[RMDB]
RNA sequence: GGGAACGACUCGAGUAGAGUCGAAAAGGCCAAGUUCAUCGGGAACCGCAAGGAGCUGAGCGAGGAGAGCCUGGAGGGGCUGGAGGAGAUCGUCAUGGACAGUGCCAAGGCGCAGGCCAUCCUGGAAUAACCAUACGUCAUUCGUGACGUAUGGUUAAAAAGAAACAACAACAACAAC
Reactivity to DMS in 0.01 (KOAc 150mM, MgCl2 10mM, bicine 150mM(pH8.5), 24C), signal-to-noise 4, nucleotides 027 to 126: g000g010c020c050a070a090g030u010u000c060a110u000c110g020g020g000a070a150c060c070g030c110a100a120g000g020a080g020c060u000g010a070g010c080g010a090g020g020a100g000a110g030c040c040u000g020g020a170g030g010g000g010c050u010g000g000a130g000g010a100g010a080u010c080g020u010c080a070u000g010g010a070c060a080g010u000g000c020c030a090a130g000g010c050g010c060a080g020g000c010c040a090u000c010c010u000g010g020a110a090
Reactivity to 2A3 in 0.01 (KOAc 150mM, MgCl2 10mM, bicine 150mM(pH8.5), 24C), signal-to-noise 2, nucleotides 027 to 126: g070g040c020c010a040a020g040u050u060c060a080u130c100g070g020g030a070a070c020c020g040c060a050a070g040g000a040g050c040u090g000a000g060c040g030a040g000g020a060g020a000g010c010c040u050g030g030a040g010g000g000g020c010u020g040g020a050g010g020a080g020a050u070c050g050u030c030a050u060g040g020a030c020a040g040u000g050c020c010a030a020g090g000c040g010c040a030g000g000c000c010a040u020c020c020u030g020g030a100a030